[RMDB]
RNA sequence: GGGAACGACUCGAGUAGAGUCGAAAACGGACGGGUGACAGUCAACUCGCCCUGAAGUCAGGAACGGUGACACCGAAUCGGGGGUUCUCCCCGUACGCUACCGGAUAGCGAUAGAGGUCGAGUUCACUCGUGGCUGAGUGUUCGCACUCAGCCACGAAAAAGAAACAACAACAACAAC
Reactivity to 2A3 in 0.01 (KOAc 150mM, MgCl2 10mM, bicine 150mM(pH8.5), 24C), signal-to-noise 2, nucleotides 027 to 126: c020g010g020a000c000g000g000g030u020g020a040c000a090g190u130c040a070a080c000u000c010g020c000c000c000u010g060a110a000g050u040c040a050g030g060a050a030c020g260g100u040g030a020c040a070c070c060g010a030a080u010c020g000g000g000g000g110u300u030c110u200c040c000c000c000g000u040a020c020g010c010u030a020c000c030g130g070a210u120a020g030c020g010a010u030a020g110a030g000g050u030c050g000a000g000u000u020c010a030c040
Reactivity to DMS in 0.01 (KOAc 150mM, MgCl2 10mM, bicine 150mM(pH8.5), 24C), signal-to-noise 2, nucleotides 027 to 126: c070g010g000a270c220g000g000g010u000g030a100c230a060g020u010c240a070a030c150u000c000g000c050c010c010u000g000a240a130g010u000c040a200g060g000a130a160c020g020g030u010g000a100c200a060c150c030g000a160a100u000c030g000g010g000g040g040u020u000c140u030c000c000c000c020g000u000a020c030g000c030u000a000c110c120g000g000a300u010a160g010c060g000a060u000a080g020a130g000g020u000c000g000a020g000u000u000c000a020c040

Chemical mapping of a 177-nucleotide RNA with 2A3 and DMS. The RNA was probed in 150 mM KOAc, 10 mM MgCl2 and 150 mM bicine (pH 8.5) at 24 C. Values cover nucleotides 27 to 126. For 2A3, 1,353 sequencing reads were counted.